Chemical mapping of a 177-nucleotide RNA with DMS. Values are in units of 0.01, from 0 to 300, in steps of 10. For DMS the reverse transcriptase was MarathonRT. The data come from the RNA Mapping Database (RMDB), library OK2TRN.
RNA sequence: GGGAACGACUCGAGUAGAGUCGAAAAAAAGAGGCCUUCGCCAACAAUAAUAUGCAUUUUGAUGAUAACCAACAUCUGGUGACCACUCACGGUUUCGGCGCAGCGGAAGCCGAGCAGGCGAUUGCCGUCCAUACGCCCCUUUCGAGGGGCGUAUGGAAAAAGAAACAACAACAACAAC
Reactivity to DMS in 0.01 (KOAc 150mM, MgCl2 10mM, bicine 150mM(pH8.5), 24C), signal-to-noise 1, nucleotides 027 to 126: a000a110a180g000a120g000g000c040c080u000u000c000g020c000c000a110a190c130a070a050u000a110a010u000a110u000g000c010a160u000u000u010u000g000a080u000g010a080u000a140a080c110c020a030a140c230a080u010c120u010g000g000u000g000a110c190c070a040c070u000c050a140c080g000g050u000u000u000c040g010g020c040g000c240a040g000c100g040g000a050a070g000c010c070g000a160g000c060a060g000g040c000g010a020u000u000g010c000c020g030
The reactions ran in a buffer of 150 mM KOAc, 10 mM MgCl2 and 150 mM bicine (pH 8.5), at 24 C. For DMS, 511 sequencing reads were counted.